[RMDB]
RNA sequence: GGGAACGACUCGAGUAGAGUCGAAAAUCCCGACCUUCGGGUCGGGAAAAAAGCGUACUACUGGUGGUGGUGGAGCUUCCCGUCCCAAAUAGGACGGAACAAGCGAUGAAACCACGUAACAUCCAGUAUCGCAAAAACGCACGCUUCGGCGUGCGAAUCCUUUAUAAUGGUUCGCCAUUAUAAAGGAAAAAGAAACAACAACAACAAC
Reactivity to 2A3 in 0.01 (KOAc 150mM, MgCl2 10mM, bicine 150mM(pH8.5), 24C), signal-to-noise 2, nucleotides 027 to 156: u010c000c000c000g000a010c020c000u040u100c250g050g020g000u000c000g020g030g020a150a040a000a000a010a000g030c040g000u040a060c020u000a000c000u040g000g000u000g000g010u000g000g000u000g000g030a000g000c000u010u010c020c000c000g000u000c000c030c010a140a280a050u300a040g000g000a000c000g000g050a050a110c180a060a020g000c000g070a120u060g020a020a000a000c010c020a000c010g000u000a020a010c040a100u010c010c000a020g010u040a020u120c000g000c010a000a000a000a000a140c040g020c010a040c040g000c000u060u100c300g130g000c000g010u050g000c000g000a000a050
Reactivity to DMS in 0.01 (KOAc 150mM, MgCl2 10mM, bicine 150mM(pH8.5), 24C), signal-to-noise 1, nucleotides 027 to 156: u010c000c000c000g000a000c010c010u000u010c300g070g100g050u020c010g060g020g000a000a000a020a070a050a080g020c000g010u000a080c160u010a010c000u030g000g000u000g040g000u010g000g010u010g000g000a050g040c000u000u000c030c000c000g000u010c010c000c020a020a210a150u000a030g000g030a070c010g020g000a010a010c050a090a000g000c010g000a130u010g010a150a190a040c000c010a040c010g070u010a040a010c050a100u000c000c000a020g000u010a030u000c020g040c000a050a030a090a130a090c030g000c000a030c000g060c010u000u000c300g060g000c000g080u000g050c000g000a020a060